This 177-nucleotide RNA was probed chemically with 2A3 and DMS.
RNA sequence: GGGAACGACUCGAGUAGAGUCGAAAACUGUAAGCCAGAUUUCUAACUAUUGGGAAUGUUAUAGAAAAGAGAAAUAGAAACUGGCUAACUACACACCCAAUCCUGUCUUUUACUGGCUUCCAACCGCCUUCUGGCAAUUAUUCGUAAUUGCCAGAAGAAAAGAAACAACAACAACAAC
Reactivity to 2A3 in 0.01 (KOAc 150mM, MgCl2 10mM, bicine 150mM(pH8.5), 24C), signal-to-noise 2, nucleotides 027 to 126: c020u030g010u100a040a000g030c000c020a120g060a300u000u010u020c020u030a110a230c020u020a070u090u080g050g010g110a120a190u120g070u230u220a180u080a200g090a040a140a040a000g080a000g020a040a200a010u020a020g030a000a000a000c000u010g030g030c020u020a000a000c000u020a000c060a000c000a010c000c010c030a010a060u010c010c010u040g030u130c000u020u110u070u100a120c070u040g030g030c040u060u000c010c000a050a060c010c030g020c030
Reactivity to DMS in 0.01 (KOAc 150mM, MgCl2 10mM, bicine 150mM(pH8.5), 24C), signal-to-noise 1, nucleotides 027 to 126: c210u000g010u000a070a050g060c010c010a020g020a300u000u010u000c010u000a050a110c030u000a130u000u000g000g030g030a190a140u030g000u010u000a080u000a080g000a120a100a120a100g000a090g020a080a120a140u000a030g000a040a020a070c010u000g000g000c010u000a000a060c090u010a050c140a030c150a090c000c010c050a020a120u000c060c020u010g000u010c010u000u000u000u000a060c130u000g000g000c030u000u000c040c020a090a180c140c080g000c170
For 2A3, 1,530 sequencing reads were counted. The reactions ran in a buffer of 150 mM KOAc, 10 mM MgCl2 and 150 mM bicine (pH 8.5), at 24 C. For DMS, 748 sequencing reads were counted.